This 207-nucleotide RNA was probed chemically with 2A3 and DMS. DMS adducts were read by reverse transcription with MarathonRT. Conditions: 150 mM KOAc, 10 mM MgCl2 and 150 mM bicine (pH 8.5), 24 C. The data come from the RNA Mapping Database (RMDB), library M2RFPK.
[RMDB]
RNA sequence: GGGAACGACUCGAGUAGAGUCGAAAAGUAGAAUCUGUCAAGCAAAACCCCAAAACCUUACACUGAGAGCAUUUAGCCUGAUUACUCUUUAAAUCAAGUCAGGCAAUAGAGAGAAACUCGAGAGGUGAAACGGGAGUAAUGUUCGCAUUACUCCCAAGAAAAGCAUAACGUUCGCGUUAUGCUUUUCAAAAGAAACAACAACAACAAC
Reactivity to 2A3 in 0.01 (KOAc 150mM, MgCl2 10mM, bicine 150mM(pH8.5), 24C), signal-to-noise 3, nucleotides 027 to 156: g070u060a000g030a060a070u040c020u070g090u090c060a090a020g000c030a060a070a090a100c010c000c010c010a010a000a030a090c050c020u100u090a050c070a030c060u090g010a010g010a000g060c010a080u050u090u140a040g020c000c000u010g000a030u040u100a090c040u070c090u170u230u200a100a130a080u110c060a050a020g020u000c000a000g000g000c000a000a010u020a010g060a000g020a000g020a030a090a040c010u020c030g030a090g010a020g060g020u060g050a060a120a050c080g000g000g000a000g000u000a010a000u000g000u010u040c040g000c000a000u000u000a000c000u000c000c000c000a000a000
Reactivity to DMS in 0.01 (KOAc 150mM, MgCl2 10mM, bicine 150mM(pH8.5), 24C), signal-to-noise 2, nucleotides 027 to 156: g020u010a100g010a110a070u000c060u000g010u000c030a070a130g020c000a070a090a070a210c030c020c010c030a110a080a110a090c050c030u010u010a100c030a070c100u020g020a130g010a050g000c020a060u000u000u000a140g020c000c010u000g000a030u000u000a100c110u000c030u000u000u000a080a070a090u010c020a080a250g010u000c020a000g030g010c000a010a070u000a080g020a040g000a130g000a140a100a070c020u000c030g020a060g000a120g000g040u010g010a060a070a080c070g010g010g010a020g050u000a000a030u000g020u000u010c230g010c010a000u000u010a000c010u000c000c000c000a010a000